[RMDB]
RNA sequence: GGGAACGACUCGAGUAGAGUCGAAAAGAAGAAUGCGCCACCCAACCCGAGCAAUGCCAAGCCCACCGCCUGCAACACGCCCGACAUGACCAGCUGCCAUGACGCCACCACCGUCGAGGCGCCCCAGGCUAAGCAUGGGGUUCGCCCCAUGCUUAGCAAAAGAAACAACAACAACAAC
Reactivity to DMS in 0.01 (KOAc 150mM, MgCl2 10mM, bicine 150mM(pH8.5), 24C), signal-to-noise 3, nucleotides 027 to 126: g010a140a180g020a090a050u000g000c020g020c010c030a070c020c010c020a120a120c060c020c030g010a110g000c100a040a030u030g020c000c060a080a140g050c000c000c000a080c020c020g010c000c040u000g000c070a040a050c150a060c110g000c010c040c050g000a050c070a030u020g010a100c030c040a070g050c040u010g000c010c000a060u010g010a080c060g000c030c010a070c060c030a040c070c040g000u010c040g000a080g000g000c050g020c030c020c000c030a050g010
Reactivity to 2A3 in 0.01 (KOAc 150mM, MgCl2 10mM, bicine 150mM(pH8.5), 24C), signal-to-noise 5, nucleotides 027 to 126: g170a030a020g040a050a040u110g030c020g000c010c020a050c010c000c020a030a040c010c000c030g040a020g030c060a080a050u110g020c010c020a040a020g020c000c000c010a020c010c020g020c000c010u040g000c000a020a010c020a010c050g020c000c010c010g030a030c030a080u100g050a060c010c010a010g030c030u050g010c020c000a060u100g030a020c020g020c040c010a030c000c010a020c000c000g040u040c040g030a050g000g020c010g030c000c000c000c000a020g060
Structure probing data (DMS and 2A3) for a 177-nucleotide construct. The 2A3 profile rests on 6,694 reads.